Source information
Source: RMDB library RFMREP, as collected in RNAgym. Chemical mapping of a 177-nucleotide RNA with 2A3 and DMS. For 2A3, 3,447 sequencing reads were counted. Conditions: 150 mM KOAc, 10 mM MgCl2 and 150 mM bicine (pH 8.5), 24 C. High DMS reactivity at an A or C suggests that its Watson-Crick edge is free.
RNA sequence: GGGAACGACUCGAGUAGAGUCGAAAACCUACUUAUACUAAAAUGUAAGCCUGUAUUUAAGCAGUAUAAGCAAUACUUAAAUAUAUUACUGCCCUUAGAUCAAAGCUAUAUGCAUUAGUACCUCUAUCUAAUUGUAGUACUUCGGUACUACAAUUAGAAAAGAAACAACAACAACAAC
Reactivity to 2A3 in 0.01 (KOAc 150mM, MgCl2 10mM, bicine 150mM(pH8.5), 24C), signal-to-noise 4, nucleotides 027 to 126: c010c010u020a050c040u160u250a090u050a080c020u030a030a070a120a100u050g010u020a040a020g000c000c000u060g040u120a040u000u050u010a000a000g010c000a000g010u010a040u030a090a030g010c020a090a070u070a150c020u100u170a060a150a090u190a060u090a080u190u060a040c000u010g000c000c010c080u010u010a010g000a020u000c010a000a080a020g010c010u040a030u020a020u280g020c020a040u020u000a010g010u020a100c000c050u030c020u020a100u020
Reactivity to DMS in 0.01 (KOAc 150mM, MgCl2 10mM, bicine 150mM(pH8.5), 24C), signal-to-noise 1, nucleotides 027 to 126: c000c010u010a060c190u010u010a090u000a030c000u000a030a050a080a100u000g010u000a040a020g030c030c060u020g060u000a020u000u010u000a000a080g020c010a010g000u000a020u000a050a120g000c030a130a060u000a250c070u010u000a040a020a060u000a020u000a070u000u000a020c000u000g000c110c110c180u000u020a030g000a060u010c040a110a100a240g000c020u000a070u000a170u010g020c100a010u000u000a010g000u000a010c130c060u000c080u000a070u020